[RMDB]
RNA sequence: GGGAACGACUCGAGUAGAGUCGAAAAAUCGCCCAGCUGGACCUGGCCUAUCACGACAUCAAGCGUGGGCGCGGUGUCUUCGAUCUGCUGCAGCGUAAGGGGCUGGCGGCGCGUGUCACGACCGACAGACUCGUGGACCAUUCGUGGUCCACGAGUCAAAAGAAACAACAACAACAAC
Reactivity to DMS in 0.01 (KOAc 150mM, MgCl2 10mM, bicine 150mM(pH8.5), 24C), signal-to-noise 3, nucleotides 027 to 126: a080u010c130g000c010c040c000a150g000c040u000g000g010a100c080c050u000g000g000c050c040u010a060u000c050a070c160g010a020c070a070u010c200a090a180g000c030g010u010g020g020g020c010g010c180g020g000u000g000u020c010u000u020c090g010a080u010c060u000g020c040u000g000c060a080g040c030g020u000a070a050g020g000g010g000c020u010g010g020c050g020g010c040g020c060g030u000g010u000c070a030c080g000a140c070c000g020a090c130a120
Reactivity to 2A3 in 0.01 (KOAc 150mM, MgCl2 10mM, bicine 150mM(pH8.5), 24C), signal-to-noise 3, nucleotides 027 to 126: a000u070c060g030c000c000c000a020g040c030u030g050g040a060c000c020u030g030g000c000c010u110a090u190c040a020c080g110a070c030a100u090c080a150a090g000c040g010u080g060g100g010c040g010c030g030g080u060g030u040c000u060u080c060g040a080u020c030u080g030c010u020g020c060a040g000c030g100u070a080a080g000g030g030g030c020u030g040g020c000g000g000c040g000c030g050u040g040u040c040a030c110g030a060c020c050g020a030c020a040
Chemical mapping of a 177-nucleotide RNA with DMS and 2A3. The reactions ran in a buffer of 150 mM KOAc, 10 mM MgCl2 and 150 mM bicine (pH 8.5), at 24 C.